[RMDB]
RNA sequence: GGGAACGACUCGAGUAGAGUCGAAAAGAUAUGGACUCGAAGUCUUCGAAGAACUGGUCUCGGAAACGAGAGCCAGGGAGAAGUCACGAGUCCUAAGUCAAAAUCUUCAAUGUUCGCAUUGAAGAAAGCACCAAUAACAGUUCGCUGUUAUUGGUGCAAAAGAAACAACAACAACAAC
Reactivity to DMS in 0.01 (KOAc 150mM, MgCl2 10mM, bicine 150mM(pH8.5), 24C), signal-to-noise 1, nucleotides 027 to 126: g010a030u000a090u000g000g000a000c000u040c010g020a110a240g030u010c010u000u000c000g000a090a220g000a190a200c030u000g000g000u030c000u000c000g040g000a030a030a040c000g010a000g030a040g000c000c000a020g000g020g030a050g030a040a000g010u010c200a230c020g010a000g020u000c000c010u000a000a060g010u000c010a070a070a130a100u000c000u000u000c000a000a030u000g020u000u040c270g010c020a020u000u000g000a000a010g000a010a030a110
Reactivity to 2A3 in 0.01 (KOAc 150mM, MgCl2 10mM, bicine 150mM(pH8.5), 24C), signal-to-noise 2, nucleotides 027 to 126: g010a000u000a000u060g020g010a000c010u020c010g070a190a070g150u040c030u050u000c030g300a300a060g000a000a010c000u000g000g070u020c000u010c000g020g000a010a000a000c000g000a000g020a080g130c010c000a000g000g000g000a010g000a000a010g010u030c100a010c070g050a000g020u010c000c000u010a000a000g000u010c010a050a040a000a300u000c000u020u020c010a000a040u000g040u080u080c300g000c180a020u020u030g000a000a000g000a040a040a000